Chemical mapping of a 177-nucleotide RNA with 2A3 and DMS.
RNA sequence: GGGAACGACUCGAGUAGAGUCGAAAAGAUAUGGAACCUGUGUACCAGCAACAGCUCCAAUCGGAAACGAUUGGAGACAUGCUGACAUUGGGUUCCUAAGUCAAACGGAGUUCUUCGGAACUCCGAAUCUCUGGUUUAUGUUCGCAUAAACCAGAGAAAAAGAAACAACAACAACAAC
Reactivity to 2A3 in 0.01 (KOAc 150mM, MgCl2 10mM, bicine 150mM(pH8.5), 24C), signal-to-noise 1, nucleotides 027 to 126: g010a030u050a020u210g010g010a000a000c000c030u060g010u000g020u090a250c190c060a030g000c040a050a120c030a260g020c020u010c000c000a010a000u000c000g030g010a000a070a070c000g010a000u000u000g000g020a010g000a010c000a030u040g010c000u000g010a000c000a020u190u300g020g000g010u000u000c000c010u040a050a000g000u000c050a150a030a060c040g010g020a000g010u000u020c010u040u070c300g110g000a000a010c000u000c010c030g010a010a020
Reactivity to DMS in 0.01 (KOAc 150mM, MgCl2 10mM, bicine 150mM(pH8.5), 24C), signal-to-noise 2, nucleotides 027 to 126: g010a020u010a300u010g000g000a030a000c000c000u000g030u010g020u000a110c300c040a000g000c000a000a170c240a170g000c000u000c000c000a010a010u000c000g010g000a060a030a180c000g010a010u000u000g010g000a000g010a010c020a130u000g010c000u010g010a000c000a000u000u010g110g010g060u010u020c000c030u000a010a080g000u000c030a070a100a240c040g010g000a030g030u010u030c000u010u000c130g010g010a010a000c000u000c000c000g000a070a020
Conditions: 150 mM KOAc, 10 mM MgCl2 and 150 mM bicine (pH 8.5), 24 C.